[RMDB]
RNA sequence: GGGAACGACUCGAGUAGAGUCGAAAACUGCAAAGAUAUCUAGAAAGGUAGGAGCCAUGAUAACCUUAUUCUCCUUGCCGGCAUCUGGGAUGCAGAAUCAUGUGCGAUUAGCUGACCGAUCUCCAGACGCGAGAGCUCUUUUCGAAGAGCUCUCGCGAAAAGAAACAACAACAACAAC
Reactivity to 2A3 in 0.01 (KOAc 150mM, MgCl2 10mM, bicine 150mM(pH8.5), 24C), signal-to-noise 1, nucleotides 027 to 126: c000u000g000c110a160a120a000g000a080u160a130u300c000u110a000g300a260a120a000g000g100u020a080g070g020a030g000c030c030a100u240g030a030u030a000a020c000c000u160u090a110u020u020c000u000c040c000u000u230g050c000c000g000g050c010a000u000c000u000g010g000g010a020u150g000c000a030g070a080a100u120c050a050u110g130u000g000c050g100a180u090u090a000g100c080u080g100a000c010c010g000a100u010c000u010c000c000a030g000a110